[RMDB]
An RNA of 177 nucleotides, treated with 2A3 and DMS and read out base by base.
The DMS profile rests on 839 reads.
The reactions ran in a buffer of 150 mM KOAc, 10 mM MgCl2 and 150 mM bicine (pH 8.5), at 24 C.
RNA sequence: GGGAACGACUCGAGUAGAGUCGAAAAGACCAUGGGAUGAGAGAGACAUCACCAUCGAUUUUGAUUACUGUCCAGGCACCAAAGUGACAGUCACCCCAACAUGCAGGGAUAGGGUUGCCUCCGCCAAACGGAUGGUGGGAUUCGUCCCACCAUCCGUAAAAGAAACAACAACAACAAC
Reactivity to 2A3 in 0.01 (KOAc 150mM, MgCl2 10mM, bicine 150mM(pH8.5), 24C), signal-to-noise 1, nucleotides 027 to 126: g030a010c000c050a010u010g000g020g000a040u020g010a040g040a010g000a000g030a130c010a040u030c060a060c130c000a030u020c070g120a130u000u000u080u270g120a110u020u070a020c000u010g020u010c000c000a070g000g160c050a060c110c000a160a090a060g060u110g050a010c020a010g000u020c020a090c000c000c000c000a030a010c030a060u250g000c030a010g100g000g040a010u110a040g070g030g010u030u030g080c020c000u000c000c000g030c000c010a090a090
Reactivity to DMS in 0.01 (KOAc 150mM, MgCl2 10mM, bicine 150mM(pH8.5), 24C), signal-to-noise 1, nucleotides 027 to 126: g000a160c080c050a100u010g000g000g020a030u020g010a160g000a150g010a100g010a090c030a030u000c010a140c050c040a060u020c060g000a120u000u000u010u000g010a160u000u000a110c040u030g000u000c000c030a150g010g000c080a060c060c090a050a070a100g020u010g000a090c030a030g030u020c110a100c010c010c000c030a060a110c160a080u000g040c080a080g030g000g000a100u030a040g000g000g000u030u000g000c010c000u000c020c020g000c070c080a000a080
Reactivities are given for positions 27 through 126.